[RMDB]
RNA sequence: GGGAACGACUCGAGUAGAGUCGAAAAUCACCGCACCGGUGCGGUGUGCGCCCCCGGGCAACUCGCCGACACCGGCCGAGCGGCUGACAUGCUCACCCUGGCUAAAUGCGGAAUGGCGGCUGGUGUCGGCCCGUACCAUGUUCGCAUGGUACGGGCCAAAAGAAACAACAACAACAAC
Reactivity to 2A3 in 0.01 (KOAc 150mM, MgCl2 10mM, bicine 150mM(pH8.5), 24C), signal-to-noise 4, nucleotides 027 to 126: u070c000a020c010c000g020c000a050c020c170g300g100u110g030c030g000g030u020g000u010g010c060g060c000c010c000c010c030g000g000g000c010a060a090c050u040c100g000c020c010g010a010c000a000c000c000g020g000c000c000g010a040g040c040g050g000c030u030g040a070c030a110u210g020c010u030c020a120c020c020c020u030g060g000c030u090a210a150a050u200g020c030g080g090a130a140u110g120g020c020g010g000c010u010g000g010u010g000u010c020
Reactivity to DMS in 0.01 (KOAc 150mM, MgCl2 10mM, bicine 150mM(pH8.5), 24C), signal-to-noise 5, nucleotides 027 to 126: u000c010a050c010c000g000c030a100c130c220g010g030u010g020c010g010g020u000g010u000g010c300g020c060c010c010c090c080g000g020g030c050a050a100c100u000c130g020c040c010g000a030c010a020c010c000g050g020c030c010g010a100g000c060g010g020c060u010g020a110c100a060u010g010c010u000c060a140c300c060c050u010g010g000c020u000a050a090a100u000g010c010g000g000a060a070u010g000g000c030g010g010c030u010g010g010u000g010u000c020